[RMDB]
RNA sequence: GGGAACGACUCGAGUAGAGUCGAAAAUGCCGAGAUAAGUUUCAUUUUGCGUCUUUUGAAUUCGAAUAGUUCAUGUGAUGUGACGUAGUGGAACAUACCUGAAAAAAUACCAGCGUUCGCGCUGGUAGAAAAGGUAUUGCUUCGGCAAUACCUUUUCAAAAGAAACAACAACAACAAC
Reactivity to 2A3 in 0.01 (KOAc 150mM, MgCl2 10mM, bicine 150mM(pH8.5), 24C), signal-to-noise 2, nucleotides 027 to 126: u030g050c030c010g060a020g000a080u110a140a020g010u010u000u000c020a030u020u130u210u120g010c000g010u020c010u070u210u070u060g000a020a030u110u060c130g130a160a110u110a260g000u000u020c030a010u060g070u070g250a140u170g050u070g070a000c000g000u030a010g020u020g010g000a000a000c000a030u060a040c010c040u020g120a060a080a040a000a020a000u060a010c000c000a000g000c010g020u030u070c060g000c000g010c040u000g000g000u000a000
Reactivity to DMS in 0.01 (KOAc 150mM, MgCl2 10mM, bicine 150mM(pH8.5), 24C), signal-to-noise 1, nucleotides 027 to 126: u010g000c030c030g000a000g010a000u000a040a080g020u000u000u000c000a000u000u010u050u000g030c010g040u000c010u000u010u000u000g000a020a010u000u000c190g030a160a120u010a100g000u000u000c000a010u010g040u020g010a110u010g030u010g010a020c010g040u020a050g060u000g000g000a000a000c020a100u000a010c020c010u010g000a010a020a060a100a090a210u000a010c010c000a030g020c000g030u000u000c170g050c020g030c000u000g000g020u000a000